[RMDB]
RNA sequence: GGGAACGACUCGAGUAGAGUCGAAAAGAUAUCACCUAUAGUUUCAGCAGGGUUGAUAAGAGGCUCCAGUAUAUAGCCCGGAUUAGACAUCUAGCCCGGGCAGAGACCUACCUCAUAGUGAACAUUAAAUCAACAUCUAUUUCGAUAGAUGUUGAUUAAAAGAAACAACAACAACAAC
Reactivity to 2A3 in 0.01 (KOAc 150mM, MgCl2 10mM, bicine 150mM(pH8.5), 24C), signal-to-noise 4, nucleotides 027 to 126: g060a040u090a010u080c030a040c030c010u070a070u050a300g030u030u070u090c050a070g030c030a030g030g030g010u130u100g070a030u030a050a100g050a010g030g020c020u030c060c020a020g140u020a100u020a030u090a170g000c000c000c020g000g000a000u010u000a030g050a090c070a130u100c070u010a000g000c010c010c000g000g000g000c000a000g000a000g000a030c010c010u010a020c010c020u030c020a030u050a050g180u110g120a080a020c020a060u090u170a070
Reactivity to DMS in 0.01 (KOAc 150mM, MgCl2 10mM, bicine 150mM(pH8.5), 24C), signal-to-noise 7, nucleotides 027 to 126: g010a210u010a040u010c040a070c010c010u000a140u010a120g010u010u000u000c070a090g020c100a140g010g000g010u000u020g010a040u000a070a110g000a080g000g010c250u000c050c110a070g020u000a100u000a160u000a160g010c000c000c010g010g010a030u000u000a010g000a230c300a160u010c010u000a020g000c050c000c000g010g010g010c000a010g010a070g010a060c050c020u000a170c040c010u000c050a080u000a090g010u000g000a060a080c110a090u000u010a030

An RNA of 177 nucleotides, treated with 2A3 and DMS and read out base by base. DMS adducts were read by reverse transcription with MarathonRT.